[RMDB]
RNA sequence: GGGAACGACUCGAGUAGAGUCGAAAACGUUCAUCUUGUUCUGGACUUAACUCCUAGGAGCCUGCUGGGGGCUGAGCCUUCAAGAGUCUGAGGGUUUCCCACCCACAGAUGGUGUCGGGGUGACUCUGAGCAUCCCCAGGCUGCCCAUCUAGGAAGGAGGUAUGGUAAGAUUCGUCUUACCAUACCUAAAAGAAACAACAACAACAAC
Reactivity to 2A3 in 0.01 (KOAc 150mM, MgCl2 10mM, bicine 150mM(pH8.5), 24C), signal-to-noise 1, nucleotides 027 to 156: c060g020u020u020c040a130u050c060u050u110g020u130u070c040u040g000g030a060c040u170u140a080a040c020u090c000c000u030a030g050g060a000g080c000c070u060g040c070u060g020g030g030g010g000c100u120g050a020g010c000c000u040u050c050a060a030g020a010g100u000c010u040g010a130g020g010g010u020u040u040c000c000c000a040c010c000c000a040c000a010g010a010u030g030g140u140g080u130c060g000g000g000g020u030g050a090c000u020c130u280g050a060g060c010a070u090c010c020c000c000a000g020g010c000u010g030c010c020c010a070u020c020u010a000g070g030a060a070g100g070
Reactivity to DMS in 0.01 (KOAc 150mM, MgCl2 10mM, bicine 150mM(pH8.5), 24C), signal-to-noise 2, nucleotides 027 to 156: c080g000u010u000c030a080u000c070u000u000g000u000u000c030u000g030g010a140c050u000u010a080a150c000u000c000c010u000a100g010g040a140g000c020c080u000g020c080u020g020g050g020g000g040c070u000g000a110g010c000c010u000u090c050a120a110g000a230g010u000c020u000g020a080g010g030g030u000u010u010c020c040c010a300c050c020c000a160c000a070g020a030u010g020g020u000g020u010c070g000g000g040g010u000g000a090c040u000c060u000g010a120g040c060a080u000c000c000c000c000a100g010g020c010u000g010c130c030c040a090u010c030u000a080g040g040a130a160g020g020